[RMDB]
RNA sequence: GGGAACGACUCGAGUAGAGUCGAAAAUGGAUGAGGUAUCGGGCAACCACAGAAGUGGGCGAUUGCGGAGCCCUUCUCACGUUACAGCAUGCGAAAUAUUACAACAAUCGCGUGUGGUGUGGCAUACAUAUAGGAGGAGACGGAGAUUGGGGAUACAGUGCCUUUAAGGAUUCGUCCUUAAAGGCACAAAAGAAACAACAACAACAAC
Reactivity to DMS in 0.01 (KOAc 150mM, MgCl2 10mM, bicine 150mM(pH8.5), 24C), signal-to-noise 1, nucleotides 027 to 156: u000g040g000a120u010g020a080g070g020u000a060u010c060g000g000g080c010a100a100c030c010a100c060a110g000a030a170g000u060g040g050g030c050g000a150u000u040g000c020g000g020a300g030c010c040c000u000u050c010u000c040a080c110g040u000u010a030c040a090g040c020a050u000g000c000g000a000a140a110u000a150u010u000a040c280a090a130c040a110a210u000c020g020c020g120u000g070u000g070g050u000g000u000g000g060c080a090u000a210c070a040u010a070u000a100g010g000a020g040g000a210g000a010c070g040g000a030g010a080u000u000g000g000g000g000a150u000a100c180a150
Reactivity to 2A3 in 0.01 (KOAc 150mM, MgCl2 10mM, bicine 150mM(pH8.5), 24C), signal-to-noise 3, nucleotides 027 to 156: u090g040g030a010u030g040a030g040g010u130a140u220c070g020g000g000c020a030a070c040c020a050c040a070g160a300a060g070u060g010g020g020c060g050a090u050u210g020c080g070g030a040g010c000c010c000u040u000c000u000c010a020c030g020u020u040a030c010a010g020c020a020u020g000c010g060a010a070a050u300a150u300u280a120c090a190a000c030a030a140u020c020g000c010g000u000g000u010g000g180u050g010u000g010g000c010a010u100a120c030a050u190a100u140a120g060g000a000g010g020a010g030a020c060g040g000a020g000a050u030u100g050g000g010g000a020u060a080c070a030